[RMDB]
RNA sequence: GGGAACGACUCGAGUAGAGUCGAAAAAAACGUGUGCGCCGAUUGACUAAGGGUUCCUGGGUCAAGCUGAUCUGCCCAGGGUAAGUCGGGACCUAAGGCGAGGCCGACAGGCGUAGUCGAUGGAUAAAUAUAGGUGAAUGUUCGCAUUCACCUAUAUAAAAGAAACAACAACAACAAC
Reactivity to DMS in 0.01 (KOAc 150mM, MgCl2 10mM, bicine 150mM(pH8.5), 24C), signal-to-noise 8, nucleotides 027 to 126: a040a030a040c110g010u000g020u000g010c060g020c010c010g000a110u000u000g010a060c060u000a100a120g010g010g010u010u010c010c010u000g000g000g010u010c080a060a080g010c100u000g010a070u010c070u000g000c010c010c010a060g000g000g000u000a030a050g010u000c040g010g000g010a120c020c010u010a100a140g000g000c060g010a150g010g000c010c000g000a090c300a080g000g010c030g010u000a190g010u000c020g000a110u010g000g010a120u000a060a110
Reactivity to 2A3 in 0.01 (KOAc 150mM, MgCl2 10mM, bicine 150mM(pH8.5), 24C), signal-to-noise 2, nucleotides 027 to 126: a000a020a000c060g060u100g020u040g060c080g000c010c010g030a080u050u130g040a040c030u060a080a100g110g020g040u100u080c010c010u000g010g010g030u140c100a080a020g000c140u130g080a130u110c020u070g000c000c010c000a010g010g000g020u020a030a000g020u010c000g010g010g060a080c010c010u060a050a020g090g010c030g030a040g000g070c000c010g000a020c030a050g020g000c000g020u010a020g050u040c000g000a050u080g010g010a010u110a080a180
Chemical mapping of a 177-nucleotide RNA with DMS and 2A3. The DMS profile rests on 12,747 reads. Conditions: 150 mM KOAc, 10 mM MgCl2 and 150 mM bicine (pH 8.5), 24 C. 2A3 adducts were read by reverse transcription with SuperScript II with manganese. For DMS the reverse transcriptase was MarathonRT. In probing experiments dimethyl sulfate is read out at A N1 and C N3, which are open when not base-paired.